RNA sequence: GGGAACGACUCGAGUAGAGUCGAAAACGCUGGGCCACACUAUCAGGCUACCCACCUAUCUGAAGCGCGCACGGAUAGAGGCCUGACGAAUGUGUGCCUGUGCUGAAGCGCGCACGGCAACCGAAAGGUGCGGGGGAGAUAUGUUCGCAUAUCUCAAUGUAUAUAUGUAUUUCGAUACAUAUAUACAAAAAGAAACAACAACAACAAC
Reactivity to DMS in 0.01 (KOAc 150mM, MgCl2 10mM, bicine 150mM(pH8.5), 24C), signal-to-noise 4, nucleotides 027 to 156: c060g040c070u000g030g020g000c020c010a050c030a050c070u000a070u010c020a040g010g010c020u000a020c020c010c040a300c030c000u000a060u000c000u010g020a040a070g030c010g040c010g000c010a300c050g010g010a030u000a000g010a160g010g020c020c010u000g010a030c010g030a070a040u000g010u000g000u000g040c000c000u000g030u010g010c010u010g020a110a060g030c050g020c040g040c000a300c050g010g010c010a150a170c040c010g010a110a170a200g020g030u000g010c030g020g000g000g020g010a120g020a080u000a050u000g020u010u000c200g030c040a070u000a070u000c000u000c010a050a120
Reactivity to 2A3 in 0.01 (KOAc 150mM, MgCl2 10mM, bicine 150mM(pH8.5), 24C), signal-to-noise 6, nucleotides 027 to 156: c080g000c020u070g000g010g010c060c000a000c000a010c050u020a010u040c000a000g010g000c010u070a100c050c050c010a060c010c000u010a000u000c010u030g070a300a070g020c000g000c000g000c000a010c000g000g010a000u000a000g010a000g000g000c000c000u020g010a020c010g100a300a300u060g000u000g030u140g000c000c000u030g050u060g000c040u120g040a140a070g000c010g000c000g000c010a000c020g080g010c040a110a110c020c010g060a140a010a010g010g010u030g020c040g000g000g000g000g000a010g000a000u020a000u010g050u050u120c280g000c110a000u000a000u010c010u010c010a030a080